[RMDB]
RNA sequence: GGGAACGACUCGAGUAGAGUCGAAAAUCGGCGAAGUCGCCGAACCGGUUUACGGCGCCGCACAACACGUCUGCGUCGAGAGAAAGGCAUUGCGGCACUGAUGCGCUCGACCUUGUAAAGUGAAAGGGUACGGUUCAUUAUUCGUAAUGAACCGUACAAAAGAAACAACAACAACAAC
Reactivity to 2A3 in 0.01 (KOAc 150mM, MgCl2 10mM, bicine 150mM(pH8.5), 24C), signal-to-noise 5, nucleotides 027 to 126: u040c000g000g000c010g070a230a040g300u300c020g000c020c000g010a010a030c020c010g090g070u060u200u130a050c030g020g000c030g000c000c000g050c010a020c040a100a190c050a030c090g070u080c100u110g070c060g050u030c010g000a010g000a000g030a090a130a010g100g000c020a030u020u100g040c030g070g020c070a020c080u120g050a060u050g000c010g020c020u000c020g040a070c000c020u040u110g110u130a070a120a120g040u070g130a120a010a020g090g030
Reactivity to DMS in 0.01 (KOAc 150mM, MgCl2 10mM, bicine 150mM(pH8.5), 24C), signal-to-noise 5, nucleotides 027 to 126: u000c000g000g010c020g020a230a160g010u010c060g040c010c000g000a040a120c080c030g010g010u000u000u000a120c090g010g010c030g000c020c040g020c060a050c230a090a130c120a090c140g010u000c040u000g000c080g000u000c020g010a080g000a140g020a080a120a110g010g010c020a040u000u000g030c050g000g000c040a060c090u000g000a060u000g010c030g010c010u000c020g010a050c010c050u000u000g010u000a030a080a120g000u000g010a070a090a110g000g010
The record gives the reactivity of an RNA of 177 nucleotides to 2A3 and DMS. The RNA was probed in 150 mM KOAc, 10 mM MgCl2 and 150 mM bicine (pH 8.5) at 24 C. For DMS, 5,442 sequencing reads were counted. It was measured as part of the RMDB library OK2TRN. For 2A3 the reverse transcriptase was SuperScript II with manganese. For DMS the reverse transcriptase was MarathonRT.